An RNA of 207 nucleotides, treated with DMS and 2A3 and read out base by base. 2A3 adducts were read by reverse transcription with SuperScript II with manganese.
[RMDB]
RNA sequence: GGGAACGACUCGAGUAGAGUCGAAAAUUGUCAGUGUCUUUCUGAUCCCAUGGACCCAACCAAUCCAAUCUGUGCGUACGUGUCAAGAGACAAUGGCCUGGUGUACCCAUGUGAUCCGGGGUGCUGCAAACCGAGUUGCGGCACAAAAAUGGGCCACAUCAUUCAGUAUCUUCGGAUACUGAAUGAUAAAAGAAACAACAACAACAAC
Reactivity to DMS in 0.01 (KOAc 150mM, MgCl2 10mM, bicine 150mM(pH8.5), 24C), signal-to-noise 3, nucleotides 027 to 156: u010u010g020u000c010a110g040u000g010u000c050u000u000u010c050u000g000a110u010c010c020c020a170u010g010g020a100c020c020c020a060a100c060c080a130a120u000c020c000a070a130u000c040u000g000u010g010c080g010u000a090c090g010u030g040u000c030a080a100g000a230g000a090c030a070a120u000g010g020c020c090u000g020g020u010g010u000a100c000c020c010a040u000g020u000g000a050u000c010c040g020g000g010g050u010g030c000u010g000c030a070a070a300c030c170g000a130g020u010u000g010c000g010g000c000a040c010a010a010a050a100a090u000g000g010g020c010c010a070c280
Reactivity to 2A3 in 0.01 (KOAc 150mM, MgCl2 10mM, bicine 150mM(pH8.5), 24C), signal-to-noise 6, nucleotides 027 to 156: u110u070g070u050c020a030g010u010g050u060c030u020u150u010c010u050g030a030u040c010c020c000a010u020g030g010a070c020c020c020a030a050c020c010a040a050u010c020c030a050a120u030c030u050g090u050g070c030g060u090a130c060g070u080g080u140c050a100a040g070a010g000a140c030a070a080u060g020g020c010c030u040g020g000u050g030u070a060c020c000c010a020u050g030u040g040a040u030c020c030g000g020g010g010u010g000c000u000g000c010a000a020a060c080c060g050a050g040u020u030g000c030g010g000c050a010c020a060a090a020a020a040u100g020g020g000c030c000a030c000